Chemical mapping of a 177-nucleotide RNA with DMS and 2A3. For DMS, 24,249 sequencing reads were counted. For 2A3, 69,856 sequencing reads were counted. The data come from the RNA Mapping Database (RMDB), library TTRDES. For 2A3 the reverse transcriptase was SuperScript II with manganese.
RNA sequence: GGGAACGACUCGAGUAGAGUCGAAAAGAUAUGGACCGUUAUAGUGGCGAAGAACUGCGUCGGAAACGACGCAGGGAGCCAUAUACUGCGGUCCUAAGUCAAACGUUGACUGUUCGCAGUCAACGAAGUUACAUAGAUAGUUCGCUAUCUAUGUAACAAAAGAAACAACAACAACAAC
Reactivity to DMS in 0.01 (KOAc 150mM, MgCl2 10mM, bicine 150mM(pH8.5), 24C), signal-to-noise 9, nucleotides 027 to 126: g000a030u000a280u010g000g000a020c000c000g030u000u000a080u010a090g040u010g020g020c000g000a130a170g010a130a220c010u000g000c000g030u000c000g010g000a080a060a150c000g010a010c010g000c000a000g000g000g000a040g020c010c010a070u000a040u000a040c300u010g000c010g000g000u000c000c000u000a010a090g000u000c020a120a100a280c030g000u000u000g000a020c010u000g010u000u020c250g020c010a000g000u000c010a000a000c000g010a020a060
Reactivity to 2A3 in 0.01 (KOAc 150mM, MgCl2 10mM, bicine 150mM(pH8.5), 24C), signal-to-noise 9, nucleotides 027 to 126: g010a000u030a020u100g000g000a000c010c000g010u040u070a120u070a250g250u130g040g010c050g300a300a010g000a020a010c000u000g000c000g000u000c000g010g000a030a030a020c000g000a000c010g000c000a000g000g000g000a000g000c010c010a010u020a020u010a060c100u140g040c010g010g000u000c000c000u000a020a010g000u000c020a100a070a140c020g000u000u010g000a000c000u000g060u070u120c300g000c180a000g000u000c000a000a000c000g000a060a010
Annotation: The RNA was probed in 150 mM KOAc, 10 mM MgCl2 and 150 mM bicine (pH 8.5) at 24 C. Reactivities are given for positions 27 through 126.